RNA sequence: GGGAACGACUCGAGUAGAGUCGAAAACACGAGCACGCGCUGGCUGAUCGCCUUGACGACCGCGAGAUCGUGCGCGACGAACAGAUAGGACAGCGAAAGCUCGCGUUGCAGGUCGCGCAGCAGAUUACCAUCCGGAUUACUUCGGUAAUCCGGAUGGAAAAGAAACAACAACAACAAC
Reactivity to DMS in 0.01 (KOAc 150mM, MgCl2 10mM, bicine 150mM(pH8.5), 24C), signal-to-noise 2, nucleotides 027 to 126: c060a090c060g000a050g030c000a080c170g080c050g030c030u000g020g000c030u010g000a110u000c060g000c040c070u020u010g010a130c020g010a100c050c070g000c110g000a150g010a070u020c010g030u000g030c010g010c060g020a030c010g030a100a090c020a090g010a080u000a070g010g010a090c040a050g000c010g020a130a120a210g000c020u000c000g000c120g030u000u000g000c090a160g010g010u010c080g030c000g020c020a040g010c060a080g000a040u010u000a150
Reactivity to 2A3 in 0.01 (KOAc 150mM, MgCl2 10mM, bicine 150mM(pH8.5), 24C), signal-to-noise 1, nucleotides 027 to 126: c030a000c040g010a010g000c060a010c130g130c010g000c050u060g000g000c020u010g080a100u050c080g030c030c000u070u230g110a100c050g030a020c070c000g020c030g040a000g000a080u070c060g010u090g070c000g000c000g020a030c000g020a130a000c000a040g080a070u180a060g080g200a030c010a020g060c020g040a140a050a010g000c020u020c030g000c000g020u040u080g000c070a060g000g090u020c000g030c000g000c040a000g070c000a000g030a070u070u080a060
Structure probing data (DMS and 2A3) for a 177-nucleotide construct.
For DMS, 1,310 sequencing reads were counted.
2A3 adducts were read by reverse transcription with SuperScript II with manganese.
Reactivities are given for positions 27 through 126.
The 2A3 profile rests on 1,625 reads.
Conditions: 150 mM KOAc, 10 mM MgCl2 and 150 mM bicine (pH 8.5), 24 C.